[RMDB]
RNA sequence: GGGAACGACUCGAGUAGAGUCGAAAAUGCUACACCCACUACACGUAAUUACCGGUGUAGCUAGGGUAGUUACGACAACUGAUCCGAGAGGAUCUACAUUAAGGCGAAGGUGAAAUAUAGGUUAAUAGGCACCUGAAGCCGACCCUAUUAACCAACACAGGUACUAUGACUUCGGUCAUAGUACCUGAAAAGAAACAACAACAACAAC
Reactivity to 2A3 in 0.01 (KOAc 150mM, MgCl2 10mM, bicine 150mM(pH8.5), 24C), signal-to-noise 3, nucleotides 027 to 156: u110g010c020u020a000c010a070c030c030c000a020c040u080a040c040a010c000g170u190a120a210u180u170a150c100c050g160g000u050g000u010a010g010c020u020a010g030g000g040u010a080g010u080u100a030c030g020a020c060a130a080c120u100g010a000u000c000c000g020a020g010a050g070g000a000u020c000u010a030c030a070u160u090a070a050g030g000c040g040a040a020g020g000u020g100a020a090a000u290a030u140a210g000g000u000u000a010a000u010a020g000g000c000a010c000c020u020g070a050a010g000c020c010g010a050c000c000c000u000a000u010u000a000a000c010c000a030a040c100a010
Reactivity to DMS in 0.01 (KOAc 150mM, MgCl2 10mM, bicine 150mM(pH8.5), 24C), signal-to-noise 2, nucleotides 027 to 156: u010g030c010u010a040c010a110c010c000c080a090c080u000a080c060a140c130g020u000a050a170u020u000a090c090c050g050g010u010g020u000a000g020c010u000a020g010g000g020u000a020g050u010u000a050c030g010a190c090a070a090c030u010g020a110u000c000c010g000a300g000a300g010g000a010u000c000u000a050c120a130u010u040a150a110g000g050c080g000a120a140g000g040u000g000a070a130a080u010a160u000a150g010g000u000u010a030a000u000a030g000g000c020a020c040c010u010g030a070a240g050c150c030g010a070c210c010c010u030a030u030u010a010a040c070c010a110a100c160a140
This 207-nucleotide RNA was probed chemically with 2A3 and DMS. For 2A3, 2,051 sequencing reads were counted. For DMS the reverse transcriptase was MarathonRT. The reactions ran in a buffer of 150 mM KOAc, 10 mM MgCl2 and 150 mM bicine (pH 8.5), at 24 C. It was measured as part of the RMDB library OK3TST.